Structure probing data (2A3 and DMS) for a 177-nucleotide construct. DMS adducts were read by reverse transcription with MarathonRT. The RNA was probed in 150 mM KOAc, 10 mM MgCl2 and 150 mM bicine (pH 8.5) at 24 C. Source: RMDB library OK2TST, as collected in RNAgym. High DMS reactivity at an A or C suggests that its Watson-Crick edge is free.
[RMDB]
RNA sequence: GGGAACGACUCGAGUAGAGUCGAAAAGCUCCACCUUCCUGCUGUUUCCCAUCCCAAAGUUCUGGCGCAAGGAGAAGCCCGAGGUUGAGCAGGAGUUGCAGGCGUGACCUGAUGCCUUGGAUGAGGAAUUAGAAAAUCCAUUCGUGGAUUUUCUAAUAAAAGAAACAACAACAACAAC
Reactivity to 2A3 in 0.01 (KOAc 150mM, MgCl2 10mM, bicine 150mM(pH8.5), 24C), signal-to-noise 3, nucleotides 027 to 126: g020c010u010c010c010a030c000c040u070u040c000c010u030g020c030u040g080u070u070u000c020c000c010a030u060c020c010c000a100a150a030g080u090u040c030u070g030g000c000g010c070a100a080g070g010a130g060a060a010g030c000c000c030g030a030g060g010u050u080g030a010g000c020a020g010g000a040g040u150u150g060c020a010g060g000c080g110u070g030a110c000c000u040g030a060u090g050c000c020u020u060g080g020a050u050g050a030g050g020a030
Reactivity to DMS in 0.01 (KOAc 150mM, MgCl2 10mM, bicine 150mM(pH8.5), 24C), signal-to-noise 7, nucleotides 027 to 126: g010c040u000c030c040a100c050c040u000u000c010c010u010g010c030u000g010u000u000u000c020c030c020a170u010c030c010c040a080a100a120g010u000u000c050u000g010g010c050g010c080a100a080g010g010a120g010a130a150g010c040c020c020g010a040g000g010u000u000g010a050g010c040a040g000g010a080g000u010u010g000c060a060g000g000c040g020u010g000a110c020c020u000g010a090u000g010c010c010u000u000g000g010a090u010g000a150g010g000a110